[RMDB]
An RNA of 177 nucleotides, treated with DMS and read out base by base. In probing experiments dimethyl sulfate is read out at A N1 and C N3, which are open when not base-paired. DMS adducts were read by reverse transcription with MarathonRT. The reactions ran in a buffer of 150 mM KOAc, 10 mM MgCl2 and 150 mM bicine (pH 8.5), at 24 C.
RNA sequence: GGGAACGACUCGAGUAGAGUCGAAAAUGGGCGCUGACCGAGCAGCUCGACGUGCUCGCCGGCCACUUCGACGACAUCGAGGACGAGUACCUGCGCGAGCGCAAGGCCGAUAUCGAACAGGUGGUCAGUGCGAUUUAGCGUUCGCGCUAAAUCGCACAAAAGAAACAACAACAACAAC
Reactivity to DMS in 0.01 (KOAc 150mM, MgCl2 10mM, bicine 150mM(pH8.5), 24C), signal-to-noise 1, nucleotides 027 to 126: u050g010g010g050c020g000c220u010g040a150c130c000g020a010g010c030a110g000c040u010c060g000a070c300g030u000g000c010u000c000g000c050c000g020g000c030c010a080c040u010u000c010g010a070c030g000a180c170a080u000c000g000a010g000g000a140c070g000a130g000u000a070c050c020u000g000c010g000c030g000a020g050c000g050c010a160a070g020g000c030c050g000a030u000a090u000c030g010a100a060c190a150g000g000u000g010g000u030c010a060